[RMDB]
RNA sequence: GGGAACGACUCGAGUAGAGUCGAAAAUGGCUCCAGAAUGCACGGUACGCUUCACCUUUCACUUCAAACUCCACCUCCGCCAGACAUUCGGCGGUAUCGCGGGUCAUGAGAUCAUUUUGCGAUUGUGGGUACACCUUCGAUUCGUCGAAGGUGUACCAAAAGAAACAACAACAACAAC
Reactivity to DMS in 0.01 (KOAc 150mM, MgCl2 10mM, bicine 150mM(pH8.5), 24C), signal-to-noise 1, nucleotides 027 to 126: u000g000g040c030u000c020c050a120g000a200a090u010g000c060a100c080g000g020u000a070c060g020c040u010u000c060a130c000c050u000u020u030c010a060c090u050u020c050a050a070a090c070u000c040c040a110c080c110u000c000c010g010c020c060a060g000a100c120a190u030u000c170g010g000c000g000g000u010a000u000c030g040c030g000g000g010u000c000a080u010g000a120g000a060u030c020a160u000u000u000u000g000c030g030a030u000u010g000u020g020
Reactivity to 2A3 in 0.01 (KOAc 150mM, MgCl2 10mM, bicine 150mM(pH8.5), 24C), signal-to-noise 1, nucleotides 027 to 126: u120g000g020c020u020c030c030a000g130a080a030u150g030c040a010c060g000g030u160a070c030g000c050u030u070c070a060c000c000u030u070u110c040a050c050u050u090c030a010a130a050c020u020c010c000a020c010c020u000c010c010g000c020c000a050g040a130c030a130u170u170c070g000g000c000g000g030u010a010u030c030g000c030g020g000g040u010c040a100u200g130a020g030a120u040c010a080u020u300u190u080g040c030g000a020u010u120g090u090g040